[RMDB]
RNA sequence: GGGAACGACUCGAGUAGAGUCGAAAAAUGAGAUUGACGAUAUUCCACUGCUUCCAUUGUACGCUUUGAUGAAAGUUGACUUUGAUUCGGAUGUUGUCGUGGAAAAAUCCGAGGAGCUUAUGGCAAACGGUAUCGGUCGAUUCGUCGACCGAUACCGAAAAGAAACAACAACAACAAC
Reactivity to 2A3 in 0.01 (KOAc 150mM, MgCl2 10mM, bicine 150mM(pH8.5), 24C), signal-to-noise 1, nucleotides 027 to 126: a010u130g000a020g020a020u060u120g030a050c000g010a030u000a090u050u050c020c020a060c030u090g090c040u000u070c000c000a030u010u070g030u090a030c010g020c010u010u040u040g200a200u210g030a000a000a020g050u090u120g050a030c000u110u050u040g040a090u260u020c030g060g020a030u030g130u100u190g040u070c040g000u030g050g200a060a100a000a030a010u000c020c030g000a030g040g040a040g030c000u000u090a010u110g070g110c030a020a010a000
Reactivity to DMS in 0.01 (KOAc 150mM, MgCl2 10mM, bicine 150mM(pH8.5), 24C), signal-to-noise 1, nucleotides 027 to 126: a040u010g030a090g000a100u000u000g010a190c210g010a040u000a110u010u010c010c040a060c090u000g000c040u000u000c020c010a070u010u000g000u000a060c090g000c060u000u000u010g000a100u020g010a050a010a030g010u000u000g040a030c090u000u000u000g010a200u000u010c080g000g000a050u000g020u000u000g000u010c140g010u010g000g010a000a030a060a070a030u000c000c020g000a090g010g000a050g020c020u010u020a000u030g010g000c100a020a040a090